[RMDB]
RNA sequence: GGGAACGACUCGAGUAGAGUCGAAAAGAGCUCAGAAAAAUCCGGAUACUGGUGAACUUAAAGGUGCACUUGGAGUUGAAAAGAUUUUUGAUAGUUAUUUAAGUGGAUCUAAAGGAUCAUUGAGAUAAAACCGGGAUAUAUUCGUAUAUCCCGGUUUAAAAGAAACAACAACAACAAC
Reactivity to DMS in 0.01 (KOAc 150mM, MgCl2 10mM, bicine 150mM(pH8.5), 24C), signal-to-noise 1, nucleotides 027 to 126: g000a200g000c020u000c100a150g000a020a050a030a040a050u010c010c010g010g020a160u020a040c040u000g010g020u000g000a040a060c030u000u010a100a060a120g010g010u000g000c010a000c000u010u010g020g020a070g020u000u000g000a190a140a060a060g000a040u000u020u000u000u010g010a160u010a070g020u000u020a050u020u000u000a080a080g000u020g020g010a010u010c030u000a040a110a110g010g000a030u000c010a070u010u020g010a090g020a080u010a060